The record gives the reactivity of an RNA of 177 nucleotides to 2A3 and DMS. Values cover nucleotides 27 to 126. For DMS the reverse transcriptase was MarathonRT. Conditions: 150 mM KOAc, 10 mM MgCl2 and 150 mM bicine (pH 8.5), 24 C.

RNA sequence: GGGAACGACUCGAGUAGAGUCGAAAACACACAAGGUUCGCCUUGUGUGCAAGAAUAGACGAAUACUACCGUAGAAGUAUUCAGGUCACUUAACUACGGAAAUGGCGUUCUGCUUCGGCAGAACGAACACCACACGAUAGUUCGCUAUCGUGUGGUGAAAAGAAACAACAACAACAAC
Reactivity to 2A3 in 0.01 (KOAc 150mM, MgCl2 10mM, bicine 150mM(pH8.5), 24C), signal-to-noise 7, nucleotides 027 to 126: c010a000c000a000c010a010a010g040g010u050u080c140g130c030c000u000u000g000u000g000u000g010c010a020a030g090a080a090u160a140g080a040c040g010a020a010u020a030c020u060a230c010c000g020u010a000g020a120a000g010u010a020u020u040c040a010g120g090u100c060a040c210u170u180a190a050c010u020a000c000g010g090a020a070a100u200g190g020c010g000u000u000c000u000g010c000u010u030c100g100g000c000a000g000a000a000c000g000a000a020
Reactivity to DMS in 0.01 (KOAc 150mM, MgCl2 10mM, bicine 150mM(pH8.5), 24C), signal-to-noise 3, nucleotides 027 to 126: c000a010c010a000c000a000a010g000g040u000u010c210g000c000c000u000u000g010u010g010u010g000c050a070a080g020a090a110u010a110g010a100c090g000a020a010u000a010c010u000a090c010c050g000u010a010g030a170a040g010u000a020u010u000c020a050g020g010u000c080a060c130u000u020a100a060c010u000a020c010g020g010a170a030a130u010g000g020c020g010u000u000c010u000g020c000u000u000c220g010g010c000a000g020a000a010c000g010a030a130